Source: RMDB library OK2TST, as collected in RNAgym. Structure probing data (2A3 and DMS) for a 177-nucleotide construct. DMS adducts were read by reverse transcription with MarathonRT. The 2A3 profile rests on 763 reads. Conditions: 150 mM KOAc, 10 mM MgCl2 and 150 mM bicine (pH 8.5), 24 C. 2A3 adducts were read by reverse transcription with SuperScript II with manganese.
RNA sequence: GGGAACGACUCGAGUAGAGUCGAAAAAGCCCGGGUUCUGGGACCAUGGAAGUACAGGAUAUUCCAGCUUUGGUCUCUGUUGCCAAAAAGCAUGGGAUAAAGACAAUUCUAGACAACACAUGGGCAAGAGUAUACUUACCUUCGGGUAAGUAUACUCAAAAGAAACAACAACAACAAC
Reactivity to 2A3 in 0.01 (KOAc 150mM, MgCl2 10mM, bicine 150mM(pH8.5), 24C), signal-to-noise 1, nucleotides 027 to 126: a010g000c040c050c010g080g070g000u060u000c060u100g040g070g100a060c010c000a010u040g000g020a070a100g030u080a090c030a070g020g040a040u020a030u100u060c000c000a000g000c000u020u010u000g010g030u040c010u000c070u110g120u150u180g030c030c040a080a080a000a000a080g040c060a140u030g000g060g000a040u040a140a140a000g180a020c050a010a000u000u010c010u050a040g040a080c000a050a020c030a040c010a050u030g000g060g000c030a080a070
Reactivity to DMS in 0.01 (KOAc 150mM, MgCl2 10mM, bicine 150mM(pH8.5), 24C), signal-to-noise 1, nucleotides 027 to 126: a200g000c010c000c010g050g020g030u010u000c110u010g030g020g000a050c010c000a030u000g000g000a140a080g000u000a060c160a100g000g010a100u000a040u010u010c000c010a020g000c050u000u030u000g010g010u000c020u010c090u000g020u000u000g020c020c020a020a040a050a070a050g000c030a130u010g000g020g020a030u000a040a030a060g000a110c300a090a090u010u000c040u010a110g010a070c050a050a090c100a170c030a020u000g010g000g000c100a060a100